[RMDB]
RNA sequence: GGGAACGACUCGAGUAGAGUCGAAAAUUGAAAUUGAACCGUCCUGUUAUCGAAAGAUAGGCAGAAGAUACGAAAUGUGUGACAGUAUGGGAAGUAAAGGCAGACCGUGGUUCCCUUGAGUAUCUUAAUUAGGGGGACGAGUUCGCUCGUCCCCCAACUUUGGUUAUCUGUUCGCAGAUAACCAAAGAAAAGAAACAACAACAACAAC
Reactivity to 2A3 in 0.01 (KOAc 150mM, MgCl2 10mM, bicine 150mM(pH8.5), 24C), signal-to-noise 1, nucleotides 027 to 156: u090u140g010a050a000a000u060u090g000a070a040c000c010g050u040c040c010u000g040u050u030a050u040c040g040a100a020a030g050a020u090a080g050g000c030a050g090a110a040g030a030u000a060c090g050a000a030a030u240g040u030g000u040g040a000c040a030g020u100a090u090g010g000g000a030a020g050u150a130a080a070g050g000c010a010g030a090c030c020g030u080g000g050u060u030c010c000c000u000u000g020a030g000u030a050u030c000u090u030a090a140u110u190a130g000g000g000g030g010a000c000g010a000g000u030u120c280g050c060u000c000g000u000c050c000c000c000c000a000a000
Reactivity to DMS in 0.01 (KOAc 150mM, MgCl2 10mM, bicine 150mM(pH8.5), 24C), signal-to-noise 2, nucleotides 027 to 156: u000u030g030a060a100a180u010u000g000a130a140c040c000g030u010c020c000u010g030u000u000a060u000c030g000a200a100a190g020a050u000a020g020g020c040a080g020a040a070g020a060u000a050c010g000a090a090a080u010g020u010g000u000g010a090c030a050g010u000a090u020g000g000g030a100a090g030u010a050a060a070g000g030c020a090g020a110c000c070g020u000g030g000u000u000c010c000c000u000u000g020a220g000u000a080u000c050u000u010a050a140u000u000a140g000g010g030g020g020a050c010g000a010g000u000u000c200g000c020u020c020g010u010c000c010c010c010c000a000a000
Chemical mapping of a 207-nucleotide RNA with 2A3 and DMS. The reactions ran in a buffer of 150 mM KOAc, 10 mM MgCl2 and 150 mM bicine (pH 8.5), at 24 C. For 2A3, 515 sequencing reads were counted. Values cover nucleotides 27 to 156.